[RMDB]
This 177-nucleotide RNA was probed chemically with 2A3 and DMS. For 2A3, 2,986 sequencing reads were counted. DMS adducts were read by reverse transcription with MarathonRT. The reactions ran in a buffer of 150 mM KOAc, 10 mM MgCl2 and 150 mM bicine (pH 8.5), at 24 C.
RNA sequence: GGGAACGACUCGAGUAGAGUCGAAAAGCACGUCCGGCAUGGCCCGUGCGAACACUUGAGCCCCGGCAUGGCCGCUCUUGUGGAUUAGGACGUUCUAGCCCCGGCAUGGCCGCUAGUUCGUCCGAAAGGCUACCUUGACCUUCGGGUCGAGGUAGCCAAAAGAAACAACAACAACAAC
Reactivity to 2A3 in 0.01 (KOAc 150mM, MgCl2 10mM, bicine 150mM(pH8.5), 24C), signal-to-noise 5, nucleotides 027 to 126: g010c010a000c030g060u110c100c000g090g100c230a240u170g120g030c050c100c010g030u010g010c000g010a060a010c020a000c030u030u020g020a020g010c000c010c000c000g040g050c080a280u250g070g060c020c000g000c000u010c000u010u000g020u020g050g030a040u060u170a100g000g000a000c000g010u000u000c020u010a000g000c020c000c020c040g040g170c140a270u300g080g000c000c010g020c000u010a000g010u000u010c000g000u000c000c000g000a000a020a010
Reactivity to DMS in 0.01 (KOAc 150mM, MgCl2 10mM, bicine 150mM(pH8.5), 24C), signal-to-noise 2, nucleotides 027 to 126: g000c010a010c010g000u050c040c050g020g040c060a090u040g000g000c050c060c010g040u000g010c020g020a180a140c010a020c030u000u000g000a060g000c000c200c060c000g000g050c140a110u020g010g000c050c100g050c020u000c010u000u000g000u020g000g010a190u050u000a020g020g000a040c020g040u020u000c010u000a030g000c050c300c050c000g020g010c100a180u000g000g060c080c120g000c000u000a020g010u000u010c000g000u010c060c000g000a030a050a040
2A3 is a SHAPE reagent: it acylates the 2'-hydroxyl of flexible nucleotides of all four kinds.